[RMDB]
RNA sequence: GGGAACGACUCGAGUAGAGUCGAAAAGGAGACUCGGGAACGUGUAGCAUGGUGGGGACGAAGCCCCCUCCGGGCGCUCCCCUCGGACUUCCGCCGGGUGGGUUCACAUCCCCAACCCGCGGGCCGGCUACUCUUCUUUUCCUUAUCUCGUCUUCCCGCAUUGACAAGAGUUCGCUCUUGUCAAUGCAAAAGAAACAACAACAACAAC
Reactivity to 2A3 in 0.01 (KOAc 150mM, MgCl2 10mM, bicine 150mM(pH8.5), 24C), signal-to-noise 1, nucleotides 027 to 156: g110g010a010g000a040c080u060c230g020g010g010a150a020c110g050u000g000u060a010g070c130a110u300g050g090u130g010g030g020g010a020c090g050a120a020g010c000c020c010c030c020u090c100c010g010g010g010c040g030c110u030c000c000c000c010u030c000g070g010a080c030u230u020c030c000g090c050c010g010g020g000u020g000g000g000u120u120c170a030c030a170u140c020c000c030c000a090a220c000c000c000g000c020g020g000g000c010c010g020g000c020u000a000c000u030c000u110u070c020u020u110u010u120c010c040u060u060a110u020c010u000c010g010u010c020u010u020c000c000c040